[RMDB]
RNA sequence: GGGAACGACUCGAGUAGAGUCGAAAAAAUCUAUUACAAGUAAAGGUAAGAUUCCGCAUAUUAUUCUUCAUUCUCCUUCUCCAGGAACAGGCAAAACAACUGUAGCAAAAGCAUUGUGUCAUGAUGUAAAUGCUGAUAUGAUGUUUGUGAAUGGGUCCAAGGAGACACAGUUCGCUGUGUCUCCUUGAAAAGAAACAACAACAACAAC
Reactivity to DMS in 0.01 (KOAc 150mM, MgCl2 10mM, bicine 150mM(pH8.5), 24C), signal-to-noise 1, nucleotides 027 to 156: a090a010u020c060u020a090u020u000a240c060a060a110g020u000a040a080a090g010g010u010a060a120g010a190u000u000c030c020g010c100a140u000a070u010u000a090u010u000c010u000u010c020a070u000u000c020u000c010c000u000u000c020u010c050c030a100g020g010a080a040c050a070g010g030c050a030a050a090a050c080a060a080c050u010g010u000a130g000c090a070a040a050a070g030c010a020u000u000g020u020g040u000c040a050u030g040a140u010g000u010a060a020a110u010g020c020u000g020a020u010a010u000g010a040u010g020u000u000u000g070u010g010a080a100u000g010g000g060u000c040
Reactivity to 2A3 in 0.01 (KOAc 150mM, MgCl2 10mM, bicine 150mM(pH8.5), 24C), signal-to-noise 3, nucleotides 027 to 156: a000a000u190c150u080a220u140u090a050c020a110a020g090u140a260a080a090g100g020u070a010a060g000a080u080u040c060c000g090c120a010u090a080u280u110a120u140u060c040u040u100c000a070u060u000c030u050c010c010u060u090c060u020c010c030a000g020g020a060a040c010a000g060g010c070a000a120a070a030c060a100a020c020u070g010u130a010g020c000a010a080a060a000g010c000a000u000u040g050u010g040u110c050a050u130g060a020u060g080u240a020a150a080u150g000c010u000g010a020u000a020u080g030a010u030g050u020u050u040g050u050g040a050a050u080g030g020g030u060c050
Source information:
This 207-nucleotide RNA was probed chemically with DMS and 2A3. For DMS, 2,077 sequencing reads were counted. Source: RMDB library OK3TST, as collected in RNAgym.